[RMDB]
RNA sequence: GGGAACGACUCGAGUAGAGUCGAAAAGAUCUGAAGAAAGGGCCACAUGAAUUCUGUUCACAGCAUACGCUUUAUAUUAAGGAUGGCGACGAUGGUUACUUCCUUCCUUAUCCAGACCCUUCAAGAAAGGUACGGUCGGAUUCGUCCGACCGUACCUAAAAGAAACAACAACAACAAC
Reactivity to 2A3 in 0.01 (KOAc 150mM, MgCl2 10mM, bicine 150mM(pH8.5), 24C), signal-to-noise 1, nucleotides 027 to 126: g000a130u080c100u100g000a000a060g000a000a070a000g000g000g020c000c000a060c000a000u000g150a190a210u230u150c000u000g100u040u000c270a190c000a110g060c000a000u100a190c100g000c000u120u280u180a210u060a080u300u260a230a150g040g000a000u080g060g030c000g000a000c040g020a020u100g070g070u060u060a290c000u000u000c000c000u000u000c000c000u030u030a190u000c000c000a000g060a080c100c000c000u000u000c000a000a300g090a290a000
Structure probing data (2A3) for a 177-nucleotide construct. 2A3 is a SHAPE reagent: it acylates the 2'-hydroxyl of flexible nucleotides of all four kinds.